[RMDB]
RNA sequence: GGGAACGACUCGAGUAGAGUCGAAAAAAUCUGUGUCCAAAGGGGUUAUAUUAGUUGAUUUUCGUGCAGAUUGGUGUGCGCCUUGUAGAAUGAUGGAUUCUGUCUUAGAUAAAAUAGCAGAAGACCCUCAUAACCCGAAGUUCGCUUCGGGUUAUGAAAAAGAAACAACAACAACAAC
Reactivity to DMS in 0.01 (KOAc 150mM, MgCl2 10mM, bicine 150mM(pH8.5), 24C), signal-to-noise 1, nucleotides 027 to 126: a010a090u000c020u010g000u000g010u000c060c060a010a050a100g030g010g000g010u010u000a050u010a070u010u010a110g010u000u010g010a100u010u000u000u000c050g060u010g020c020a110g010a160u010u010g010g020u000g050u000g020c090g000c010c050u000u050g020u000a050g020a100a150u000g000a070u000g000g010a300u000u000c030u000g010u000c030u000u000a180g010a120u010a030a060a060a100u010a030g010c030a020g010a030a100g020a070c020c030c100
Source: RMDB library OK2TST, as collected in RNAgym. Chemical mapping of a 177-nucleotide RNA with DMS. The RNA was probed in 150 mM KOAc, 10 mM MgCl2 and 150 mM bicine (pH 8.5) at 24 C. Values cover nucleotides 27 to 126.